[RMDB]
RNA sequence: GGGAACGACUCGAGUAGAGUCGAAAACUGAUCAAACAUGCGCUUCCAAUAGUAGAAGGACGUUAAGCAUUUAUCAUUGAACUAUAAUUGUUCAUUGAAGUCAUUGAUGCAAACUCCUUGGUCACACAGUGUCGGAGGGGUUCGCCCCUCCGACACUAAAAGAAACAACAACAACAAC
Reactivity to 2A3 in 0.01 (KOAc 150mM, MgCl2 10mM, bicine 150mM(pH8.5), 24C), signal-to-noise 2, nucleotides 027 to 126: c010u010g010a050u000c110a020a070a120c030a110u060g030c000g000c010u100u000c000c000a120a220u080a070g070u020a020g000a120a010g000g040a000c060g060u020u070a070a020g000c000a000u030u000u030a110u030c000a000u000u010g000a000a020c000u000a000u230a300a230u260u080g000u020u000c000a000u000u040g000a050a010g110u100c000a080u020u300g030a000u000g020c000a010a030a020c000u000c000c000u000u020g000g010u010c040a000c000a030c000